Structure probing data (2A3 and DMS) for a 177-nucleotide construct. Source: RMDB libraries RFM100 and RFMREP, as collected in RNAgym. Reactivities are given for positions 27 through 126.
RNA sequence: GGGAACGACUCGAGUAGAGUCGAAAACCGUCUUGAAACACGGACCAAGGAGUCUGACAUGCGUGCGAGUCGACGGGUUCUGAAACCUGGGAUGCGCAAGGAAGCUGACGAGCGGGAGGCCUUCACGGGUUAAUAUCUGAUUCGUCAGAUAUUAACCAAAAGAAACAACAACAACAAC
Reactivity to 2A3 in 0.01 (KOAc 150mM, MgCl2 10mM, bicine 150mM(pH8.5), 24C), signal-to-noise 9, nucleotides 027 to 126: c010c000g050u060c040u050u110g100a080a060a010c070a020c050g020g020a020c020c010a100a140g110g010a080g050u010c030u060g050a050c020a080u120g010c030g030u040g020c030g030a030g030u020c010g030a090c000g020g000g010u060u030c130u160g100a150a050a010c010c000u020g010g020g020a050u080g010c010g000c020a010a030g060g020a080a030g010c030u050g030a060c020g020a030g010c020g010g020g000a030g010g030c000c000u080u080c060a040c100g040
Reactivity to DMS in 0.01 (KOAc 150mM, MgCl2 10mM, bicine 150mM(pH8.5), 24C), signal-to-noise 9, nucleotides 027 to 126: c010c010g010u010c040u010u010g010a120a120a100c240a080c050g000g000a160c030c030a100a130g010g010a100g010u000c020u000g010a100c100a050u010g010c060g010u000g010c030g000a120g010u010c020g010a080c030g010g000g000u000u010c100u010g000a080a050a040c040c010u000g000g010g010a050u010g010c030g000c030a070a060g000g010a130a080g010c030u000g010a080c080g000a100g010c090g000g000g010a090g010g010c020c020u010u010c080a090c200g010
Annotation:
The RNA was probed in 150 mM KOAc, 10 mM MgCl2 and 150 mM bicine (pH 8.5) at 24 C.